[RMDB]
RNA sequence: GGGAACGACUCGAGUAGAGUCGAAAAAUAGGCUUAUCAAGAGAGGUGGAGGGACUAGCCCGAUGAAACCCGGCAGCCAGAAAUGGUGCCAGUUCCUGCAGCGGAAACGUUGAAAGAUGAGCCGAUGACCGGAGUGGCUUCGGCCACUCCAAAAGAAACAACAACAACAAC
Reactivity to DMS in 0.01 (KOAc 150mM, MgCl2 10mM, bicine 150mM(pH8.5), 24C), signal-to-noise 2, nucleotides 027 to 129: a170u220a300g040g060c040u070u020a020u040c080a170a120g060a030g000a000g040g000u030g000g050a070g000g040g010a240c140u120a300g080c000c070c050g020a000u030g010a060a080a060c030c000c000g020g050c090a070g080c030c010a000g010a000a050a020u050g000g000u020g050c020c020a140g060u080u020c000c030u000g020c030a000g020c030g000g000a050a080a020c030g040u000u000g030a090a100a040g000a020u020g000a020g030c000c010g010a060u030g020a000c080c030
Reactivity to 2A3 in 0.01 (KOAc 150mM, MgCl2 10mM, bicine 150mM(pH8.5), 24C), signal-to-noise 2, nucleotides 027 to 129: a010u120a000g000g010c000u010u010a030u000c040a110a000g150a000g000a050g200g020u030g060g030a010g020g050g000a000c010u050a000g100c030c040c000g050a090u040g040a040a010a000c010c000c000g020g000c020a020g140c000c000a000g020a000a050a000u060g000g000u010g010c000c000a000g000u040u030c000c000u030g000c030a020g000c010g040g000a070a040a020c030g010u060u080g050a100a010a000g000a010u020g000a000g000c000c000g000a060u090g020a020c020c020